[RMDB]
RNA sequence: GGGAACGACUCGAGUAGAGUCGAAAAUUGGAGACCACUGGCGGCAGCUUACCAAGAACAACUGGACCGGCCGGUGGUGCCUCACCCUUACCGGGUCGGCGACACCGUGUGGGUCCGCCGACAUCAACGUCUGUGACGGAUUCGUCCGUCACAGACGAAAAGAAACAACAACAACAAC
Reactivity to DMS in 0.01 (KOAc 150mM, MgCl2 10mM, bicine 150mM(pH8.5), 24C), signal-to-noise 1, nucleotides 027 to 126: u010u030g000g000a060g000a060c020c010a010c010u000g000g000c010g030g000c080a050g000c040u000u000a190c170c160a100a040g010a040a080c070a110a090c040u000g040g000a120c010c040g080g000c000c000g030g010u000g010g010u000g030c120c000u000c040a110c000c000c010u010u000a140c210c080g000g000g000u030c080g000g010c000g080a050c000a050c010c010g020u020g030u030g020g010g000u000c130c080g000c010c000g000a010c010a060u010c130a090a130
Reactivity to 2A3 in 0.01 (KOAc 150mM, MgCl2 10mM, bicine 150mM(pH8.5), 24C), signal-to-noise 1, nucleotides 027 to 126: u060u060g130g010a020g010a050c000c010a010c010u030g030g030c040g000g010c010a020g030c010u100u120a160c120c050a130a040g070a070a140c070a040a050c080u080g040g080a100c010c000g160g050c000c010g000g010u000g010g000u000g000c000c010u000c030a070c000c000c000u040u080a160c010c130g100g000g000u000c000g000g020c010g040a000c020a130c120c050g100u220g060u240g300g010g050u030c000c050g000c000c000g010a010c000a040u140c060a000a110